[RMDB]
RNA sequence: GGGAACGACUCGAGUAGAGUCGAAAAGAAGCUUUCCAGCUCGGGCAGCAGGUGGUGCUCCUCUCCAAGCUUGAACAGUAUCAGCACUUGGGCGGCAUGGCAGGCAAUGCUGUGGAAGCGCUGCACGUAGGUAGGUGUUAUUCGUAACACCUACCUAAAAAGAAACAACAACAACAAC
Reactivity to DMS in 0.01 (KOAc 150mM, MgCl2 10mM, bicine 150mM(pH8.5), 24C), signal-to-noise 5, nucleotides 027 to 126: g020a110a110g010c050u000u000u000c020c040a130g010c020u000c100g010g010g000c090a050g020c070a060g010g010u000g020g000u010g000c050u000c030c020u000c060u010c020c030a060a080g010c070u000u000g000a050a090c110a100g020u010a100u010c050a040g010c070a090c070u000u000g010g000g000c130g010g010c080a040u000g010g020c050a060g000g020c110a070a060u000g010c010u000g000u000g010g000a070a060g000c050g020c030u000g000c120a060c150g010
Reactivity to 2A3 in 0.01 (KOAc 150mM, MgCl2 10mM, bicine 150mM(pH8.5), 24C), signal-to-noise 3, nucleotides 027 to 126: g050a070a010g020c010u050u040u020c020c010a020g000c020u020c030g030g030g030c030a030g020c040a020g020g080u060g020g080u060g050c020u050c000c000u020c020u000c010c010a060a020g010c030u070u090g040a080a040c050a100g050u120a050u180c020a020g050c020a020c060u040u030g060g040g010c030g020g000c030a060u070g020g030c000a010g070g000c030a000a150u080g010c020u020g000u060g060g060a050a020g010c010g000c040u050g010c020a030c120g040